[RMDB]
RNA sequence: GGGAACGACUCGAGUAGAGUCGAAAAGCGCCGCCCGCAUGGAGAUCAACCUCUUCGACGCGCAGCCGCUGUGUCACCUCGUCGGCCACCUGACCGUCGAGGAGCAACUGGAGGCCAUCCGACUGUGCACCUUCUCCAAGUUUUUAAAAUCGCGCGAGUUAGCGAGAGUUUUCGAACUCUCGCUAACAAAAGAAACAACAACAACAAC
Reactivity to DMS in 0.01 (KOAc 150mM, MgCl2 10mM, bicine 150mM(pH8.5), 24C), signal-to-noise 1, nucleotides 027 to 156: g000c010g000c010c070g000c010c050c040g040c190a170u000g000g040a080g000a070u020c050a150a130c050c040u000c020u000u010c090g020a000c020g050c060g000c150a120g000c000c000g100c030u010g020u000g040u000c060a110c010c040u020c020g040u000c010g030g000c000c020a130c240c270u050g000a060c050c000g000u010c010g000a010g020g020a150g020c070a020a090c070u040g010g010a090g000g010c060c050a080u000c050c020g010a070c030u000g010u000g050c000a140c060c010u000u000c010u000c000c010a030a200g020u000u000u000u000u000a070a080a080a080u020c160g020c050g000c050g010a080
Reactivity to 2A3 in 0.01 (KOAc 150mM, MgCl2 10mM, bicine 150mM(pH8.5), 24C), signal-to-noise 3, nucleotides 027 to 156: g000c010g010c010c060g000c000c010c010g070c050a100u090g000g010a020g000a030u110c090a110a110c020c030u120c060u170u130c110g110a080c050g020c040g010c010a020g040c040c030g030c090u050g040u050g020u120c030a130c090c010u000c030g060u010c020g000g000c000c010a220c050c070u180g150a230c000c000g000u010c000g000a000g000g000a000g000c010a020a100c030u100g040g050a050g020g000c000c010a040u040c040c020g060a070c050u010g010u040g020c040a060c030c010u040u030c010u010c010c000a030a050g050u060u000u000u080u220a050a030a030a040u140c010g000c010g000c000g000a000